[RMDB]
RNA sequence: GGGAACGACUCGAGUAGAGUCGAAAACCUCUGUCCACCUUCGAGGGGGUUCACACCCCCAACCGGCGGGCCGGCUGCUCUUCUUUCCCUUCUCUCGUCUUCCUCGGUCAACCUCUUGAGUUCCCCUGUCGUGUUCCGUUCGCGGAACACAAAAGAAACAACAACAACAAC
Reactivity to DMS in 0.01 (KOAc 150mM, MgCl2 10mM, bicine 150mM(pH8.5), 24C), signal-to-noise 9, nucleotides 027 to 129: c000c000u030c050u000g000u030c030c070a150c120c040u030u040c080g000a230g020g010g000g010g000u040u040c290a170c090a250c010c000c000c000c000a050a050c090c050g020g020c040g010g010g010c030c070g010g020c080u000g030c020u030c030u020u020c030u010u030u000c000c040c040u010u000c040u040c040u010c060g020u010c030u050u000c020c040u020c060g060g000u000c070a070a130c050c040u020c060u000u000g000a140g010u010u020c030c000c000c030u030g000u000c010
Reactivity to 2A3 in 0.01 (KOAc 150mM, MgCl2 10mM, bicine 150mM(pH8.5), 24C), signal-to-noise 6, nucleotides 027 to 129: c000c000u020c060u060g050u030c010c020a040c030c030u070u090c050g050a170g010g010g000g010g020u160u150c060a080c010a000c040c000c000c000c000a020a010c000c000g050g010c020g000g020g000c000c000g010g000c030u050g020c010u020c010u070u030c000u020u060u040c000c010c000u050u010c020u000c010u000c010g050u010c020u150u060c010c000u000c010g020g010u030c010a040a060c020c000u040c000u050u060g030a030g020u000u010c000c000c000c010u020g070u080c050

The record gives the reactivity of an RNA of 170 nucleotides to DMS and 2A3. 2A3 adducts were read by reverse transcription with SuperScript II with manganese. Reactivities are rounded to 0.1 and cut off at 0 and 3. In probing experiments dimethyl sulfate is read out at A N1 and C N3, which are open when not base-paired. For DMS the reverse transcriptase was MarathonRT.